Description
This 207-nucleotide RNA was probed chemically with DMS and 2A3.
[RMDB]
RNA sequence: GGGAACGACUCGAGUAGAGUCGAAAAUUGUCCAUAUUCAAGCCAAGAGAGGAAAGAUGUGGAACUGCUGUUGCCAAGGGGGAAAGUGCAGGUCUUCAAUACCACCUUGAUGUUUUAUGUUUAUAAAAUUUGGCUCAGCUGGGCGCGGUGGCUCAUGCCAGUAGGUCAAAUUCGUUUGACCUACUGGAAAAGAAACAACAACAACAAC
Reactivity to DMS in 0.01 (KOAc 150mM, MgCl2 10mM, bicine 150mM(pH8.5), 24C), signal-to-noise 2, nucleotides 027 to 156: u000u020g000u000c010c020a110u010a080u010u010c060a090a190g040c020c050a080a100g020a130g020a140g000g010a130a080a120g010a030u000g040u010g040g010a070a100c140u000g010c010u020g010u000u010g020c010c050a080a050g010g010g000g040g020a050a060a110g000u010g030c020a050g020g010u000c040u000u010c030a090a070u000a080c040c000a060c010c020u010u000g020a110u000g010u000u010u000u000a040u020g010u000u000u030a020u000a010a050a050a150u000u000u000g020g040c000u000c020a080g000c050u000g000g000g000c060g050c060g010g030u000g040g050c000u000c030a110u020g010
Reactivity to 2A3 in 0.01 (KOAc 150mM, MgCl2 10mM, bicine 150mM(pH8.5), 24C), signal-to-noise 4, nucleotides 027 to 156: u130u050g040u020c030c000a020u060a100u090u140c050a090a030g040c010c010a090a000g070a020g010a030g080g000a080a060a050g030a020u040g010u040g040g020a020a020c040u080g000c010u040g040u130u060g040c020c050a050a050g030g010g020g000g030a030a070a060g060u090g040c040a010g030g040u030c020u130u100c090a050a040u080a150c000c010a020c040c000u060u040g040a050u050g090u020u090u060u030a050u070g050u010u260u000a100u100a070a110a050a050u060u080u090g020g000c020u010c020a030g000c040u060g020g000g000c030g010c020g010g030u030g020g000c020u020c030a000u110g030
The reactions ran in a buffer of 150 mM KOAc, 10 mM MgCl2 and 150 mM bicine (pH 8.5), at 24 C.
Source: RMDB library OK3TST, as collected in RNAgym.
For DMS the reverse transcriptase was MarathonRT.